[RMDB]
RNA sequence: GGGAACGACUCGAGUAGAGUCGAAAAGUGGCACGGAUAUGGACGUCGUAAGUCUUUCAACACUUGCAAGCGAUAGAGAGAAAACGGUCUCCUAUCUGAGAGAGAAAGGUCUCCUCGUCACGUACACCGCUUGGAAGUUUUUCGAAACUUCCAAGCGAAAAGAAACAACAACAACAAC
Reactivity to DMS in 0.01 (KOAc 150mM, MgCl2 10mM, bicine 150mM(pH8.5), 24C), signal-to-noise 2, nucleotides 027 to 126: g000u000g020g000c000a300c090g010g000a050u010a050u000g040g040a020c080g010u000c030g030u000a030a110g010u000c010u010u030u000c030a120a130c190a060c030u000u000g010c220a100a040g010c070g020a110u010a070g000a040g000a000g010a040a020a070a050c140g000g020u000c120u000c000c010u000a000u000c010u010g000a070g000a090g010a050g010a020a090a130g020g000u000c020u000c000c050u000c140g000u020c040a070c040g000u020a100c160a100c100
Reactivity to 2A3 in 0.01 (KOAc 150mM, MgCl2 10mM, bicine 150mM(pH8.5), 24C), signal-to-noise 2, nucleotides 027 to 126: g020u010g020g000c040a020c100g020g000a030u060a070u260g050g020a020c050g000u040c010g020u030a050a060g080u010c000u000u010u010c030a040a030c000a010c090u080u180g120c110a130a040g080c010g030a040u070a100g090a020g000a010g000a030a030a030a000c080g040g040u000c010u000c000c000u000a010u010c010u030g030a060g000a000g000a000g030a160a100a030g150g130u000c000u000c010c010u050c040g000u030c030a020c030g010u010a040c060a060c050

Chemical mapping of a 177-nucleotide RNA with DMS and 2A3. For DMS the reverse transcriptase was MarathonRT. Source: RMDB library OK2TRN, as collected in RNAgym. The reactions ran in a buffer of 150 mM KOAc, 10 mM MgCl2 and 150 mM bicine (pH 8.5), at 24 C. For 2A3 the reverse transcriptase was SuperScript II with manganese. For 2A3, 1,904 sequencing reads were counted.